RNA sequence: GGGAACGACUCGAGUAGAGUCGAAAACGUGUCGAUGGAGCGGUGGCCCGUGAUCAUCUCGUUCUUGAAUUCUAUGGCCGCAUCUAUGGCCUCGAUGGCCUCAUCGCACUCGAGCAGCUUGCGCUCCUAAAAUAGCACCCUUCGGGGUGCUAUUUUAAAAAGAAACAACAACAACAAC
Reactivity to DMS in 0.01 (KOAc 150mM, MgCl2 10mM, bicine 150mM(pH8.5), 24C), signal-to-noise 4, nucleotides 027 to 126: c120g000u000g010u020c020g010a090u010g010g000a090g000c050g000g020u000g000g000c020c020c040g010u020g000a060u030c070a100u040c110u020c080g000u000u000c050u010u010g010a060a120u020u000c030u000a120u030g000g010c010c000g010c060a050u030c110u030a100u030g000g000c000c000u010c150g000a080u020g020g020c010c050u020c120a080u010c130g000c060a040c040u010c080g000a050g010c040a160g000c050u000u030g010c040g000c000u010c010c030
Reactivity to 2A3 in 0.01 (KOAc 150mM, MgCl2 10mM, bicine 150mM(pH8.5), 24C), signal-to-noise 4, nucleotides 027 to 126: c040g020u050g090u090c030g020a070u050g010g000a020g060c070g070g010u040g030g010c000c000c050g020u020g040a060u030c000a050u030c010u040c090g160u140u030c040u110u140g090a130a140u150u010c040u050a090u120g020g000c000c010g040c020a030u050c060u160a110u220g010g010c020c030u020c020g080a050u200g020g000c020c030u040c040a050u070c020g030c000a030c010u040c020g020a060g060c040a010g030c070u140u240g050c040g010c040u000c020c000

An RNA of 177 nucleotides, treated with DMS and 2A3 and read out base by base. 2A3 adducts were read by reverse transcription with SuperScript II with manganese. Conditions: 150 mM KOAc, 10 mM MgCl2 and 150 mM bicine (pH 8.5), 24 C. Source: RMDB library OK1LIB, as collected in RNAgym.